Chemical mapping of a 207-nucleotide RNA with 2A3. For 2A3 the reverse transcriptase was SuperScript II with manganese. The data come from the RNA Mapping Database (RMDB), library OK3TST. Values are in units of 0.01, from 0 to 300, in steps of 10. For 2A3, 795 sequencing reads were counted.
[RMDB]
RNA sequence: GGGAACGACUCGAGUAGAGUCGAAAAAUGCCUACAAUUUCUUUUCAGGAUGUCACGGUCCGCUUUGAUGACAAGUGCAUUCUUAACAAUAUUUCGCUUACCCUUAGUGAGCAACGAAUUGGCAUCAUUGGUGCCAAUGGAAGCGGAAAAUCUUCAAGUAAUGCGUGGAUUUCGAUCCACGCAUUACAAAAGAAACAACAACAACAAC
Reactivity to 2A3 in 0.01 (KOAc 150mM, MgCl2 10mM, bicine 150mM(pH8.5), 24C), signal-to-noise 2, nucleotides 027 to 156: a000u060g040c010c000u050a090c140a110a230u090u090u210c000u110u120u040u130c000a000g000g010a050u000g120u160c010a000c010g000g040u010c010c020g080c220u120u140u300g170a210u140g000a050c060a260a240g010u040g000c010a010u050u000c000u010u120a150a030c160a110a030u070a200u160u060u050c010g010c020u000u270a300c010c000c000u030u030a060g030u020g200a020g060c070a010a030c010g050a060a000u000u000g000g000c000a000u000c000a060u030u290g010g030u000g000c000c000a000a000u000g000g000a020a000g000c000g000g000a050a040a010a030u060c080u140u080c130a230a000